Structure probing data (2A3) for a 207-nucleotide construct. The RNA was probed in 150 mM KOAc, 10 mM MgCl2 and 150 mM bicine (pH 8.5) at 24 C. Values cover nucleotides 27 to 156. For 2A3, 651 sequencing reads were counted. 2A3 is a SHAPE reagent: it acylates the 2'-hydroxyl of flexible nucleotides of all four kinds.
[RMDB]
RNA sequence: GGGAACGACUCGAGUAGAGUCGAAAAUGGUACAAGACCGCCCAGGCUAACGGGACGUUAGGAAACGUCAUGCAGCACCUACCGCGCCAGCAGCGCCAGCGCCUCAUGCAGAUCUACCGCGUGGCGAACGGGAUCGACCGGGCGAAACGCUUUACCAAUCUCGGCAAAAUUUCGAUUUUGCCGAGAUAAAAGAAACAACAACAACAAC
Reactivity to 2A3 in 0.01 (KOAc 150mM, MgCl2 10mM, bicine 150mM(pH8.5), 24C), signal-to-noise 1, nucleotides 027 to 156: u050g000g020u040a040c040a110a060g020a090c000c030g040c000c000c020a060g000g030c040u090a120a000c080g070g010g020a010c020g030u030u080a120g060g150a190a060a000c000g040u030c020a020u080g000c060a060g000c010a050c040c010u110a100c030c040g010c060g040c020c050a040g070c020a040g040c030g060c000c010a040g060c030g020c000c000u070c000a100u160g050c020a030g030a080u000c010u050a070c000c020g030c020g010u030g020g000c020g000a010a000c050g000g000g020a000u040c040g020a040c030c160g000g000g000c030g020a040a030a000c040g030c000u010u030u030a020c000c000a000